The data come from the RNA Mapping Database (RMDB), library OK1LIB. The record gives the reactivity of an RNA of 177 nucleotides to 2A3 and DMS. Values cover nucleotides 27 to 126. For 2A3 the reverse transcriptase was SuperScript II with manganese.
RNA sequence: GGGAACGACUCGAGUAGAGUCGAAAACGGCUGCGGUUGCGGGCAACAUCGCCGUGCCGGGUGCCGAGCCGGCACAGGGCUCAGCCUGGAGGCAGACCAACGGCGUCUGGACCCGCACCUUCACCGCCGUAGUAAUCACAUUCGUGUGAUUACUACGAAAAGAAACAACAACAACAAC
Reactivity to 2A3 in 0.01 (KOAc 150mM, MgCl2 10mM, bicine 150mM(pH8.5), 24C), signal-to-noise 9, nucleotides 027 to 126: c010g030g010c090u050g000c030g030g000u070u070g000c010g000g010g000c030a080a060c010a100u060c010g000c010c000g010u020g040c020c010g010g010g010u060g040c100c100g010a020g030c010c010g080g020c120a070c080a160g100g010g000c020u020c040a030g010c010c020u060g060g040a080g100g000c070a030g110a100c040c020a040a010c010g020g000c010g010u050c100u100g110g080a290c000c000c000g000c000a000c000c000u050u050c020a020c010c020g010c010
Reactivity to DMS in 0.01 (KOAc 150mM, MgCl2 10mM, bicine 150mM(pH8.5), 24C), signal-to-noise 5, nucleotides 027 to 126: c040g010g000c140u010g030c300g000g000u000u000g010c000g020g000g020c140a130a130c090a030u010c040g010c000c000g020u000g000c020c020g000g000g010u030g030c070c090g020a050g000c040c050g000g000c100a110c210a120g000g000g000c010u000c020a140g000c000c000u020g010g000a080g000g010c090a070g010a110c110c080a190a090c040g000g000c010g010u000c160u000g000g000a210c000c000c000g000c000a010c050c030u000u020c020a080c040c050g010c120